[RMDB]
RNA sequence: GGGAACGACUCGAGUAGAGUCGAAAAGUGAAAGCUCCUUCUCUCGCAAUGUGUAACUCUUGAUUCUCAUGACCCCUGGUUGGAGAGAUCCGGACUAGGAGCCAGGGGGCCUCUGAUUCUGCCAGCCAAAACUGUCGUAAGUUCGCUUACGACAGAAUCAAGAUAAAAGAUUCGUCUUUUAUCUUGAAAAAGAAACAACAACAACAAC
Reactivity to DMS in 0.01 (KOAc 150mM, MgCl2 10mM, bicine 150mM(pH8.5), 24C), signal-to-noise 2, nucleotides 027 to 156: g020u010g000a080a120a150g010c010u000c030c020u010u010c020u000c010u010c080g050c030a100a110u010g030u000g000u000a110a050c010u000c020u000u010g010a110u000u000c020u010c030a120u010g000a110c020c000c000c020u000g020g040u000u010g030g000a130g000a180g010a130u010c030c040g030g000a120c090u000a090g010g000a090g010c010c010a050g010g010g020g010g010c040c040u000c050u010g020a120u000u000c010u000g000c030c030a080g000c010c030a070a040a070a160c010u010g000u010c010g030u020a020a020g020u000u000c300g020c000u000u000a010c000g010a030c000a000g020a050a100
Reactivity to 2A3 in 0.01 (KOAc 150mM, MgCl2 10mM, bicine 150mM(pH8.5), 24C), signal-to-noise 4, nucleotides 027 to 156: g060u080g050a150a030a040g020c010u020c020c000u070u030c020u010c000u020c020g030c060a070a140u100g060u020g020u150a070a050c010u020c020u040u090g030a060u200u010c040u020c040a070u100g060a100c000c000c000c020u010g020g000u060u070g070g020a080g000a010g010a070u010c040c050g060g050a060c060u090a070g030g000a010g000c000c010a010g000g010g000g000g000c000c010u000c020u030g060a110u120u020c020u070g030c000c010a030g020c020c010a040a100a120a110c020u000g010u010c000g000u000a010a010g000u030u090c180g020c120u000u000a000c000g000a000c000a000g000a000a010